[RMDB]
RNA sequence: GGGAACGACUCGAGUAGAGUCGAAAACCAUGGACCGCGCUGCGGCACCAUGCCCACGCGUCAUGAAACCAUGAGGUCCGACCAGGCGCAUUAACUUGUCCUCGUAGGCGUCCGUCCUACGUCCGACUUUGGGAUUUCUGUUCGCAGAAAUCCCAAAAAAAGAAACAACAACAACAAC
Reactivity to DMS in 0.01 (KOAc 150mM, MgCl2 10mM, bicine 150mM(pH8.5), 24C), signal-to-noise 1, nucleotides 027 to 126: c220c000a020u020g000g000a300c000c010g020c030g010c180u080g000c060g030g000c000a010c140c010a040u040g050c040c000c000a040c090g000c050g020u000c040a100u100g000a130a180a030c080c000a070u040g000a050g050g000u020c020c180g000a060c080c050a010g050g000c060g040c010a100u010u010a040a090c100u020u000g000u000c000c020u020c000g000u000a060g000g000c010g010u070c150c190g030u000c000c000u000a000c000g020u000c040c030g000a150c080
Reactivity to 2A3 in 0.01 (KOAc 150mM, MgCl2 10mM, bicine 150mM(pH8.5), 24C), signal-to-noise 2, nucleotides 027 to 126: c030c000a030u040g000g000a000c000c020g000c000g050c170u100g000c100g080g000c010a110c020c070a060u080g000c010c000c000a060c040g020c010g010u020c030a150u080g040a050a060a060c030c010a060u090g050a050g000g040u040c030c000g000a000c010c010a010g000g000c020g020c050a070u060u080a070a010c040u040u060g020u110c000c020u020c000g020u020a040g000g000c000g010u060c120c100g020u110c000c050u000a010c000g000u020c010c000g000a000c000
Structure probing data (DMS and 2A3) for a 177-nucleotide construct. Reactivities are rounded to 0.1 and cut off at 0 and 3. Reactivities are given for positions 27 through 126.